An RNA of 207 nucleotides, treated with DMS and 2A3 and read out base by base. It was measured as part of the RMDB library M2RFPK.
[RMDB]
RNA sequence: GGGAACGACUCGAGUAGAGUCGAAAACAUAGCGUUUCACAAUGUGCGCCAUUAACAUUGUUUAUGCAAGCACGUUUCGCAAUGUACGGCGCAGAAACAUUGCCAACACAAAUACCCUUCACGAUGUAAAACAUCGGUGCGUUCGCGCACCGAUGAACAUCCUAUGAUUGUUCGCAAUCAUAGGAUGAAAAGAAACAACAACAACAAC
Reactivity to DMS in 0.01 (KOAc 150mM, MgCl2 10mM, bicine 150mM(pH8.5), 24C), signal-to-noise 2, nucleotides 027 to 156: c040a150u000a120g030c030g040u000u000u000c060a110c030a030a100u010g000u000g040c010g010c020c000a150u010u010a140a080c010a040u000u010g000u000u000u000a040u020g020c060a130a120g030c160a060c030g020u000u000u000c130g000c070a040a030u010g000u010a100c070g000g050c040g030c010a090g020a120a070a110c020a030u000u000g020c010c030a060a050c020a070c030a030a060a120u000a080c020c010c010u000u000c080a100c050g000a110u010g020u020a090a090a100a220c000a010u000c010g010g010u000g030c000g010u000u000c300g020c000g010c000a000c000c000g010a000u000g010a060a080
Reactivity to 2A3 in 0.01 (KOAc 150mM, MgCl2 10mM, bicine 150mM(pH8.5), 24C), signal-to-noise 8, nucleotides 027 to 156: c050a070u180a030g050c030g030u030u080u080c120a070c020a050a070u050g020u030g020c010g020c030c020a080u160u200a060a010c010a010u020u040g070u040u100u100a110u150g070c090a080a090g080c060a050c200g020u030u060u080c040g000c010a010a000u010g000u020a030c050g010g000c040g000c020a000g030a010a050a000c010a010u010u040g010c020c050a050a010c030a010c020a090a120a020u150a120c010c010c000u080u110c100a070c100g100a060u110g050u240a030a060a050a050c000a000u000c000g000g000u000g000c000g010u020u060c180g000c000g000c120a010c000c010g000a000u000g000a000a000

The RNA was probed in 150 mM KOAc, 10 mM MgCl2 and 150 mM bicine (pH 8.5) at 24 C.